[RMDB]
Structure probing data (2A3) for a 207-nucleotide construct. Reactivities are given for positions 27 through 156. For 2A3, 565 sequencing reads were counted. For 2A3 the reverse transcriptase was SuperScript II with manganese. The RNA was probed in 150 mM KOAc, 10 mM MgCl2 and 150 mM bicine (pH 8.5) at 24 C.

RNA sequence: GGGAACGACUCGAGUAGAGUCGAAAAAACGCCGAGUGAAAUGGCAAAGGAAAUCCCAGCUCCUUAUAUGUGGUCCUACCAACCGCAAACCGGCCACGCCGCGGGCGCCGCCCAAGAUUACUCCACUCAAAUGAAUUGGCUUAGUGCCGGACCGGCACCCCUCAUCCUUGUUCGCAAGGAUGAGGGGAAAAGAAACAACAACAACAAC
Reactivity to 2A3 in 0.01 (KOAc 150mM, MgCl2 10mM, bicine 150mM(pH8.5), 24C), signal-to-noise 2, nucleotides 027 to 156: a000a020c080g000c000c000g040a030g030u110g060a080a090a200u130g010g000c110a050a050a000g030g000a010a070a030u090c030c000c000a040g020c010u000c010c010u130u100a120u010a070u300g050u030g010g000u020c010c030u010a100c000c040a100a020c010c020g020c040a120a040a050c010c000g000g000c010c020a010c000g030c010c000g050c080g010g000g000c030g090c170c220g000c010c010c000a000a030g010a080u170u210a080c070u060c090c040a040c090u100c070a060a140a100u160g060a050a080u100u150g020g040c040u070u120a050g020u070g180c020c000g030g020a060c040c050g010g050c010a030